[RMDB]
RNA sequence: GGGAACGACUCGAGUAGAGUCGAAAACUUCCCCCGAGAGGUCCCCCAGGAAUGGCGGGACCCCACUCUACAGGGUCCGCGUUCCAUCCUUUCUUACCUGAUGGCCGGCAUGGUCCCAGCCUCCUCGUCCGAUUCUUGUUCGCAAGAAUCAAAAGAAACAACAACAACAAC
Reactivity to DMS in 0.01 (KOAc 150mM, MgCl2 10mM, bicine 150mM(pH8.5), 24C), signal-to-noise 9, nucleotides 027 to 129: c110u000u030c000c000c000c010c000g040a060g010a130g050g000u030c020c010c010c000c020a070g000g050a080a060u000g040g050c080g000g000g000a000c000c040c010c030a020c090u010c080u030a050c140a120g010g000g020u020c020c040g060c040g020u000u000c010c030a070u020c060c050u010u020u010c050u030u030a120c040c030u000g030a110u010g000g000c030c010g010g020c070a000u040g020g010u020c030c000c010a120g030c030c020u030c010c000u000c020g010u000c040c050
Reactivity to 2A3 in 0.01 (KOAc 150mM, MgCl2 10mM, bicine 150mM(pH8.5), 24C), signal-to-noise 9, nucleotides 027 to 129: c010u030u040c000c000c000c000c010g060a040g000a030g090g020u030c000c000c000c000c000a010g030g100a110a080u090g200g090c070g040g020g000a000c000c000c000c010a050c010u090c020u090a040c040a070g020g010g000u010c020c020g090c030g050u060u030c010c010a060u050c030c000u050u120u050c020u060u070a130c020c020u050g050a080u080g080g000c020c010g030g020c030a070u100g020g010u020c010c000c000a010g020c000c000u010c000c010u020c020g070u030c040c050